Record summary:
The data come from the RNA Mapping Database (RMDB), library OK3TST. Chemical mapping of a 207-nucleotide RNA with DMS and 2A3. Values are in units of 0.01, from 0 to 300, in steps of 10. The 2A3 profile rests on 2,325 reads.
RNA sequence: GGGAACGACUCGAGUAGAGUCGAAAACUAUUGGAUAACGUCUCUGUAUUCUACGAUAGAGUGCUACUUUAAGAUGCGACAGAUCCAUGUCAUCAAAUAUAUACUCCAUUAAAAUGAUUAUUCCGGCAGCGAACUUGAUAUUGGAUAUAUCACGACCUAUAAAAGGACGAUUCGUCGUCCUUUUAUAAAAAGAAACAACAACAACAAC
Reactivity to DMS in 0.01 (KOAc 150mM, MgCl2 10mM, bicine 150mM(pH8.5), 24C), signal-to-noise 4, nucleotides 027 to 156: c040u000a090u000u010g020g010a120u000a080a060c050g010u010c020u010c040u030g010u000a070u000u000c040u000a100c080g000a140u010a050g000a100g040u000g020c050u010a070c070u010u010u000a110a170g020a080u000g010c030g000a150c050a060g000a070u010c040c040a090u000g000u000c020a060u000c040a070a080a120u010a100u010a130u000a050c040u010c000c030a100u010u000a040a070a070a100u010g000a150u000u010a210u000u000c030c050g020g000c060a060g000c040g030a070a060c030u000u000g010a050u000a060u000u000g020g010a090u010a080u000a050u000c020a060c060g010a090c050c030
Reactivity to 2A3 in 0.01 (KOAc 150mM, MgCl2 10mM, bicine 150mM(pH8.5), 24C), signal-to-noise 4, nucleotides 027 to 156: c030u060a100u070u080g020g000a030u040a150a050c050g050u020c030u000c010u040g050u030a070u070u060c050u100a040c100g080a070u090a130g040a020g020u060g050c030u040a080c010u090u130u070a090a030g030a060u060g040c070g030a020c040a060g070a040u000c030c030a030u050g030u060c020a090u020c010a030a160a000u070a000u010a010u020a100c040u030c010c020a010u050u140a050a060a060a080u080g040a050u060u120a080u160u080c020c040g050g000c040a010g020c030g050a020a020c020u030u050g010a000u010a050u090u080g080g010a010u050a000u000a000u170c020a020c070g050a060c010c020